[RMDB]
RNA sequence: GGGAACGACUCGAGUAGAGUCGAAAAGUCAUGCCUUCGGGCAUGACAGGUACCGAGAGGUACCAAAUAGCGUACAGUAGACACAGACUGUACGCUAAAAAAGUGUGUGUUCAAUAAGUACCAAUUGAACACACACUAAAAUGGUGCAAGUGUGUGACUAAUAGCUCGCUUUCGAGCGAGCUAUUAGAAAAGAAACAACAACAACAAC
Reactivity to 2A3 in 0.01 (KOAc 150mM, MgCl2 10mM, bicine 150mM(pH8.5), 24C), signal-to-noise 1, nucleotides 027 to 156: g000u000c000a000u000g030c000c000u030u070c280g000g000g000c000a010u000g000a000c000a000g000g000u000a000c000c000g000a000g000a020g140g010u000a000c010c010a010a030a020u050a000g000c020g000u000a030c010a020g000u010a020g070a230c050a030c040a070g040a010c010u000g000u000a000c000g000c000u010a000a070a000a000a000a000g010u020g000u000g000u000g000u000u000c000a000a000u090a110a070g170u120a110c060c060a030a020u020u000g000a000a000c000a000c000a000c000a000c000u000a000a000a020a030u120g080g010u120g060c080a070a090g030u040g010u000g000u010g010a030